RNA sequence: GGGAACGACUCGAGUAGAGUCGAAAAACAACAGAUAGCUGGAACCAGCGUAGAAUUCUACGCAUAUCCAUAGCGAAUGGUACCUGUAAAGAAAAUAAUGAAGGAUGUACAAGUACCAACAGUCUUCAAUGCCAUGGUGAUGUCAAUCACAUAUGCAACGCAGUCAUUUAUUCGUAAAUGACUGCGUAAAAGAAACAACAACAACAAC
Reactivity to DMS in 0.01 (KOAc 150mM, MgCl2 10mM, bicine 150mM(pH8.5), 24C), signal-to-noise 2, nucleotides 027 to 156: a070c070a030a070c060a170g030a070u010a100g030c010u020g020g000a070a110c150c140a250g000c000g030u000a010g000a300a120u000u000c020u000a010c030g000c000a150u000a060u010c000c010a050u000a040g000c000g000a200a150u000g000g060u000a000c010c010u010g040u010a060a070a120g000a120a110a060a170u010a100a130u010g020a120a090g040g000a200u000g020u000a040c010a020a050g000u020a020c010c000a000a090c080a100g010u000c030u000u010c030a090a110u000g000c020c060a050u000g020g010u010g010a110u000g030u010c170a120a070u000c060a060c020a060u010a050u000g020c060a300
Reactivity to 2A3 in 0.01 (KOAc 150mM, MgCl2 10mM, bicine 150mM(pH8.5), 24C), signal-to-noise 5, nucleotides 027 to 156: a000c040a020a000c020a040g060a080u090a040g020c010u010g010g020a080a120c070c030a040g000c000g010u010a000g060a140a300u300u130c000u000a000c000g000c000a000u020a030u080c020c010a070u130a020g020c010g040a070a040u030g000g000u000a000c000c000u020g010u050a020a070a030g130a050a050a050a020u270a030a060u180g110a100a050g060g050a040u060g010u020a010c010a030a070g000u010a030c000c000a010a030c010a020g020u020c050u080u050c060a070a120u070g010c040c020a050u070g000g020u000g010a020u040g100u120c050a090a040u030c000a020c010a020u130a010u110g000c010a020